Chemical mapping of a 177-nucleotide RNA with 2A3 and DMS. 2A3 adducts were read by reverse transcription with SuperScript II with manganese. For 2A3, 2,164 sequencing reads were counted. It was measured as part of the RMDB library OK2TST. Conditions: 150 mM KOAc, 10 mM MgCl2 and 150 mM bicine (pH 8.5), 24 C. DMS adducts were read by reverse transcription with MarathonRT.
[RMDB]
RNA sequence: GGGAACGACUCGAGUAGAGUCGAAAAAGGGAUCACCUAAAAGGGGUGAGAUGCAUGAUUUGGGCGCAGAGAUCGCUUAUCAGCUCGGUCUUAAAGCAUCCGAAGCUCAGAGCGCCAUAGAAAUGGCUCAUCCCUUGCUUUUCGAAGCAAGGGAUGAAAAAGAAACAACAACAACAAC
Reactivity to 2A3 in 0.01 (KOAc 150mM, MgCl2 10mM, bicine 150mM(pH8.5), 24C), signal-to-noise 3, nucleotides 027 to 126: a000g120g020g020a070u030c020a040c050c020u120a160a170a080a010g050g020g000g000u020g020a040g000a010u120g020c080a040u090g010a070u090u080u070g050g000g000c040g020c060a000g060a010g020a100u010c030g030c060u100u140a130u260c080a030g010c020u070c110g040g050u040c010u020u130a100a100a030g000c010a020u000c020c020g040a090a020g000c010u040c050a020g030a030g040c010g020c010c020a030u030a030g160a020a250a010u010g010g000c000
Reactivity to DMS in 0.01 (KOAc 150mM, MgCl2 10mM, bicine 150mM(pH8.5), 24C), signal-to-noise 4, nucleotides 027 to 126: a070g010g010g010a190u000c040a040c020c010u000a040a080a120a140g000g010g020g010u000g010a020g010a140u000g000c050a100u000g010a100u000u000u000g030g000g020c040g020c040a130g010a080g000a020u000c040g000c070u000u020a100u000c200a060g000c110u020c080g020g000u000c030u000u000a050a090a060g010c060a050u010c010c020g020a070a150g000c020u000c040a050g000a110g010c060g010c000c010a020u000a070g000a040a060a250u000g000g000c040